[RMDB]
RNA sequence: GGGAACGACUCGAGUAGAGUCGAAAACUCCACGCUGGGUAAGGGACGACGGCGGCGUGUGGCGAACAGGGAUACCGGUAGUCAGUGUCUGGAACAUCCCAAGGGGCGGCGGAGCUAGCACCCCGACAAAACGGGCACAAGUUCGCUUGUGCCCGAAGCAUGUUGUAUUGUUCGCAAUACAACAUGCAAAAGAAACAACAACAACAAC
Reactivity to 2A3 in 0.01 (KOAc 150mM, MgCl2 10mM, bicine 150mM(pH8.5), 24C), signal-to-noise 1, nucleotides 027 to 156: c010u000c000c000a020c030g020c000u040g030g010g060u050a050a010g090g040g050a020c070g010a010c020g020g030c040g000g000c010g030u110g020u090g020g020c100g000a080a070c020a050g010g000g040a010u020a090c030c050g030g060u020a020g070u030c050a040g010u010g000u100c010u040g010g040a070a050c020a120u070c060c020c040a110a130g050g010g000g010c060g000g000c030g040g050a070g040c080u020a020g000c000a060c000c000c000c010g000a000c130a000a150a030a010c020g000g000g000c000a000c000a000a020g040u070u140c190g000c140u010u000g010u000g000c000c000c000g010a000a000